An RNA of 177 nucleotides, treated with DMS and 2A3 and read out base by base. The DMS profile rests on 9,719 reads. The reactions ran in a buffer of 150 mM KOAc, 10 mM MgCl2 and 150 mM bicine (pH 8.5), at 24 C.

RNA sequence: GGGAACGACUCGAGUAGAGUCGAAAACGACAGAACUUCGGUUCUGUCGAAAUAAAAUCAGCGGUUAAAAUGCUGGCGUUAUAACCGCUGAACGCCAGCUUAAAAGAUUCGUGUUCGCACGAAUCAAUCAAGAAUUAAUGUUCGCAUUAAUUCUUGAAAAAGAAACAACAACAACAAC
Reactivity to DMS in 0.01 (KOAc 150mM, MgCl2 10mM, bicine 150mM(pH8.5), 24C), signal-to-noise 6, nucleotides 027 to 126: c020g010a020c000a000g000a010a000c000u000u010c180g030g010u000u010c000u000g000u010c000g000a010a050a060u010a060a050a120a110u000c020a020g010c010g000g000u000u000a020a080a050a050u000g010c050u000g010g010c020g010u000u000a070u000a050a080c020c010g000c020u000g000a010a040c070g000c010c020a070g010c100u000u010a050a070a130a120g000a010u000u010c000g020u000g000u000u010c240g020c000a010c000g000a010a000u000c000a070a090
Reactivity to 2A3 in 0.01 (KOAc 150mM, MgCl2 10mM, bicine 150mM(pH8.5), 24C), signal-to-noise 6, nucleotides 027 to 126: c000g000a000c000a000g010a010a000c010u080u140c220g070g000u000u000c000u000g000u000c000g000a000a010a000u070a010a060a000a070u060c020a020g020c010g050g070u100u130a060a080a050a070u130g030c040u050g040g020c010g000u040u040a110u030a160a010c010c010g000c020u020g020a000a000c010g030c000c010a030g000c040u040u150a080a110a010a040g000a000u000u000c010g000u010g040u060u080c250g020c060a000c000g000a000a000u000c000a000a040
For DMS the reverse transcriptase was MarathonRT. For 2A3 the reverse transcriptase was SuperScript II with manganese.